[RMDB]
RNA sequence: GGGAACGACUCGAGUAGAGUCGAAAACCUAAGGUAGCGAAAUUCCUUGUCGGGUAAGUUCCGACCUGCACGAAUCGUGAAACGAGUUGGGCACUGUCUCAACCAGGCGCUCAGUGAAAUUGUAGUGCAUCUUUAAUCGCUUCGGCGAUUAAAGAUGAAAAGAAACAACAACAACAAC
Reactivity to DMS in 0.01 (KOAc 150mM, MgCl2 10mM, bicine 150mM(pH8.5), 24C), signal-to-noise 2, nucleotides 027 to 126: c000c000u010a050a020g010g020u000a110g010c010g010a030a180a110u010u030c020c010u000u000g000u020c030g000g010g010u000a090a120g040u000u010c010c030g000a040c010c150u000g060c070a050c050g000a040a040u000c010g020u010g020a060a110a070c070g010a160g000u000u000g000g010g000c000a110c070u000g020u000c060u030c200a050a090c230c010a040g000g000c140g040c060u000c000a010g000u000g020a080a130a090u000u020g020u010a050g000u000g000
Reactivity to 2A3 in 0.01 (KOAc 150mM, MgCl2 10mM, bicine 150mM(pH8.5), 24C), signal-to-noise 1, nucleotides 027 to 126: c000c000u030a060a010g060g030u060a000g070c030g050a000a010a140u110u040c000c000u020u030g000u060c000g060g010g000u100a140a030g100u130u070c000c000g010a010c030c000u050g020c050a020c020g090a030a030u060c030g000u050g030a130a030a040c050g020a070g190u060u000g020g010g020c030a030c100u030g020u010c020u020c100a030a070c030c010a030g060g090c090g000c030u030c020a020g040u000g080a030a080a090u110u100g030u060a040g010u000g100
Conditions: 150 mM KOAc, 10 mM MgCl2 and 150 mM bicine (pH 8.5), 24 C. Structure probing data (DMS and 2A3) for a 177-nucleotide construct. For 2A3, 897 sequencing reads were counted. For 2A3 the reverse transcriptase was SuperScript II with manganese. The DMS profile rests on 1,001 reads.